[RMDB]
RNA sequence: GGGAACGACUCGAGUAGAGUCGAAAAUUCAAAGUCAAUACAUUUUCCAUUUGUAGCUUCGAAUAUAGAGUAUUGGACGAAAUAUGACGAUAGGGGCUCACUGUUCACAAGUCCUGCUUCGAAAGUUGUAAAAUCAAUAUGCGACAGUGGCUGUCAAAUCUAAGAGCCAAUUCGUUGGCUCUUAGAUAAAAGAAACAACAACAACAAC
Reactivity to 2A3 in 0.01 (KOAc 150mM, MgCl2 10mM, bicine 150mM(pH8.5), 24C), signal-to-noise 1, nucleotides 027 to 156: u020u030c040a020a000a000g050u040c070a060a020u050a070c020a140u140u040u030u140c110c040a120u120u100u040g120u050a050g050c010u010u030c020g050a040a010u090a000u040a170g070a040g120u030a120u000u150g030g070a000c010g050a070a140a000u130a030u150g040a000c030g000a010u020a150g110g040g040g000c080u110c040a030c020u020g160u140u050c080a060c040a090a040g000u040c000c010u020g100c020u020u070c010g040a170a070a030g010u070u000g040u080a130a030a000a000u090c000a010a040u120a100u180g040c000g020a000c000a030g030u040g060g010c030u020g090u170c030a000a300
Reactivity to DMS in 0.01 (KOAc 150mM, MgCl2 10mM, bicine 150mM(pH8.5), 24C), signal-to-noise 2, nucleotides 027 to 156: u000u010c020a100a060a040g000u010c050a080a120u000a030c040a030u010u000u010u000c150c110a190u000u020u000g010u010a140g010c040u000u000c010g000a060a070u000a160u010a110g000a100g030u000a040u020u000g000g010a110c070g010a080a070a210u010a060u000g040a090c000g020a130u010a160g020g010g050g020c140u000c060a040c050u010g000u000u000c080a050c070a060a060g020u010c030c000u000g030c030u000u000c030g020a100a060a190g000u010u000g010u000a040a070a070a090u010c030a020a130u000a070u000g010c010g020a010c040a070g000u000g020g020c020u000g000u010c040a000a160
The data come from the RNA Mapping Database (RMDB), library OK3TST. Chemical mapping of a 207-nucleotide RNA with 2A3 and DMS. The RNA was probed in 150 mM KOAc, 10 mM MgCl2 and 150 mM bicine (pH 8.5) at 24 C. For 2A3 the reverse transcriptase was SuperScript II with manganese.